[RMDB]
RNA sequence: GGGAACGACUCGAGUAGAGUCGAAAAAGAGCAACGUAUGCAUGAAAAUAGCACAUUAAUUAUAUACGAAUCACCGCAUCGUGUGACAGAUACAUUAAAAACAAUUGCAAAGAUAGAUGCAACACGAUACAGAGUACGCAUUCGUGCGUACUCUGUAAAAAGAAACAACAACAACAAC
Reactivity to DMS in 0.01 (KOAc 150mM, MgCl2 10mM, bicine 150mM(pH8.5), 24C), signal-to-noise 1, nucleotides 027 to 126: a000g070a080g000c110a120a130c080g000u000a050u000g000c000a040u050g000a010a000a050a000u000a210g040c020a180c300a060u050u000a060a110u000u000a140u000a060u000a150c020g030a110a080u000c000a070c020c060g000c300a080u020c160g000u100g070u000g000a060c080a180g050a160u000a020c000a170u000u000a070a060a020a060a050c230a010a040u050u000g010c060a000a040a100g010a070u010a000g020a010u010g000c020a050a020c080a000c050g000a080
Reactivity to 2A3 in 0.01 (KOAc 150mM, MgCl2 10mM, bicine 150mM(pH8.5), 24C), signal-to-noise 3, nucleotides 027 to 126: a000g110a000g000c040a020a110c050g040u020a080u040g000c010a000u080g060a080a070a040a030u110a030g060c030a010c020a080u040u100a010a110u200u070a160u020a010u010a100c100g100a090a040u030c030a010c070c020g100c040a030u040c090g040u060g010u020g170a040c000a090g050a030u110a080c050a080u060u240a010a010a080a030a020c090a060a210u110u060g050c020a070a000a020g130a080u070a000g080a000u040g000c000a000a000c010a000c080g020a010
Overview:
Chemical mapping of a 177-nucleotide RNA with DMS and 2A3. Conditions: 150 mM KOAc, 10 mM MgCl2 and 150 mM bicine (pH 8.5), 24 C. DMS (dimethyl sulfate) methylates the pairing face of unpaired adenines and cytosines. For 2A3, 1,786 sequencing reads were counted. Values are in units of 0.01, from 0 to 300, in steps of 10. The data come from the RNA Mapping Database (RMDB), library OK1LIB.